[RMDB]
RNA sequence: GGGAACGACUCGAGUAGAGUCGAAAACGCAAUGGCAGCCUAAACAGCACCAUGCGUGCCUGAUUUUUGCUCACUGAUGGCAAUUUGACGGCCUAAACUUUUAGUCAGAUACGUUGUUGUGGAGACUUGACGCAGCAAAAGAGAUUUAAAGUCCCGCCGAAUAUGACUCGUUCGCGAGUCAUAUUCGAAAAGAAACAACAACAACAAC
Reactivity to 2A3 in 0.01 (KOAc 150mM, MgCl2 10mM, bicine 150mM(pH8.5), 24C), signal-to-noise 1, nucleotides 027 to 156: c030g020c040a110a100u000g010g030c030a040g000c000c000u030a120a050a000c010a000g020c000a000c000c000a000u000g000c000g010u000g000c000c000u000g010a020u000u000u000u010u040g000c000u000c030a030c010u040g000a020u030g000g000c000a010a010u010u000u020g000a010c000g010g000c000c000u160a080a160a080c070u040u150u240u250a020g000u000c000a010g000a100u060a160c120g000u000u000g010u000u000g000u000g040g050a130g010a070c000u000u010g030a060c040g000c070a050g000c000a020a000a090a030g120a040g000a010u140u140u130a020a040a020g030u000c020c000c030g010c000
This 207-nucleotide RNA was probed chemically with 2A3. It was measured as part of the RMDB library ARCHII. The 2A3 profile rests on 841 reads.